[RMDB]
RNA sequence: GGGAACGACUCGAGUAGAGUCGAAAAUCAAGCCCGUGUUCGGCGGCGUACUCACGGACGUCCUGGGUGAUGCGCAUGGAGCAGAACUUCGGUCCGCACAUCGAGCAGAAGUGCGCGGUCUUGGCCGGCCCAUCGCGCCCUUCGGGGCGCGAUGGGCAAAAGAAACAACAACAACAAC
Reactivity to 2A3 in 0.01 (KOAc 150mM, MgCl2 10mM, bicine 150mM(pH8.5), 24C), signal-to-noise 1, nucleotides 027 to 126: u170c000a000a010g040c000c000c000g000u010g040u000u080c060g000g010c000g000g000c000g010u060a120c120u070c020a000c050g300g000a230c000g280u000c000c070u300g020g000g020u040g000a110u050g040c040g020c000a110u300g000g110a150g060c150a040g020a130a050c020u070u070c070g000g130u000c000c000g190c000a070c000a070u210c070g130a000g200c120a070g000a220a000g050u050g000c000g000c000g060g000u000c000u050u020g000g070c000c000g000
Chemical mapping of a 177-nucleotide RNA with 2A3. Conditions: 150 mM KOAc, 10 mM MgCl2 and 150 mM bicine (pH 8.5), 24 C. The 2A3 profile rests on 292 reads. 2A3 adducts were read by reverse transcription with SuperScript II with manganese.